This 207-nucleotide RNA was probed chemically with 2A3 and DMS. The reactions ran in a buffer of 150 mM KOAc, 10 mM MgCl2 and 150 mM bicine (pH 8.5), at 24 C. It was measured as part of the RMDB library OK3TST. Reactivities are given for positions 27 through 156. Values are in units of 0.01, from 0 to 300, in steps of 10.
[RMDB]
RNA sequence: GGGAACGACUCGAGUAGAGUCGAAAACGCAUGCGAGAGCAUGCGGCUAAGCUUCGGCUUAGUAAGAGCAACUUUGGAUUUUAGGCUCCCCGGCGUGUCUCGAACCAUGCCGGGCCAAACCCAUAGGGCUGGCGGUCCCUGUGCGGUCAAAAUUCAAGCGAGAUAGCACGUUCGCGUGCUAUCUGGCAAAAGAAACAACAACAACAAC
Reactivity to 2A3 in 0.01 (KOAc 150mM, MgCl2 10mM, bicine 150mM(pH8.5), 24C), signal-to-noise 7, nucleotides 027 to 156: c010g000c000a000u000g000c000g010a040g010a000g050c000a000u000g000c000g000g000c000u000a010a000g000c000u020u140c290g110g000c000u000u000a000g000u020a060a030g000a000g000c030a030a110c080u040u040u050g010g000a020u010u010u020u070a070g030g010c000u000c000c000c000c000g000g000c010g020u020g020u020c080u070c290g080a040a030c030c000a010u010g000c000c000g000g000g000c010c000a010a010a000c000c000c000a000u010a010g020g000g010c030u060g080g100c070g040g050u120c000c000c000u000g010u000g010c150g000g000u050c030a000a000a010a020u030u020c020a060a010
Reactivity to DMS in 0.01 (KOAc 150mM, MgCl2 10mM, bicine 150mM(pH8.5), 24C), signal-to-noise 2, nucleotides 027 to 156: c000g030c000a020u010g020c010g000a300g000a290g020c000a010u010g010c000g040g000c000u000a000a030g000c020u000u010c300g040g020c000u010u000a020g000u000a050a110g020a130g000c010a060a060c070u000u000u000g010g000a070u010u000u000u000a140g020g020c050u000c050c020c020c020g030g000c010g060u000g010u000c070u010c190g040a120a170c190c000a030u000g000c000c000g000g000g020c010c000a040a060a070c020c020c020a040u000a030g000g000g030c030u000g030g020c100g020g000u010c000c000c010u010g030u000g010c050g050g000u000c080a000a020a040a070u000u000c030a060a240